[RMDB]
RNA sequence: GGGAACGACUCGAGUAGAGUCGAAAACGACACUGCAGGACGGUGACGGCACCAACUUGCAGGUGAUGAUUAGUCUCAACAAGGUUGGUUCCGAAACGCUUGACGCGUGGAAAGUCGACGUCGAUCAUCAGGUCCUAAAUUUCGAUUUAGGACCUGAAAAAGAAACAACAACAACAAC
Reactivity to 2A3 in 0.01 (KOAc 150mM, MgCl2 10mM, bicine 150mM(pH8.5), 24C), signal-to-noise 2, nucleotides 027 to 126: c020g030a000c040a020c100u060g000c000a060g010g020a040c030g000g050u060g010a190c110g110g150c030a000c000c000a020a060c010u030u010g000c000a030g000g050u020g030a080u030g020a020u010u160a040g030u000c010u000c050a010a100c020a020a080g050g000u020u070g010g000u040u000c000c000g030a050a060a010c020g000c080u070u150g110a050c070g000c010g000u030g000g070a100a100a020g020u040c020g020a060c050g050u050c040g050a110u040c020a050
Reactivity to DMS in 0.01 (KOAc 150mM, MgCl2 10mM, bicine 150mM(pH8.5), 24C), signal-to-noise 5, nucleotides 027 to 126: c080g010a110c100a060c040u000g020c000a050g010g000a110c300g000g020u000g000a190c160g010g000c040a050c010c000a030a270c010u010u000g010c060a040g000g010u000g020a070u010g020a080u000u000a080g020u000c040u000c020a070a070c110a100a100g000g010u000u000g010g000u000u000c000c000g010a120a100a060c070g020c040u000u000g000a140c150g010c030g000u000g020g010a070a050a140g000u000c020g010a070c100g010u000c040g010a110u000c130a130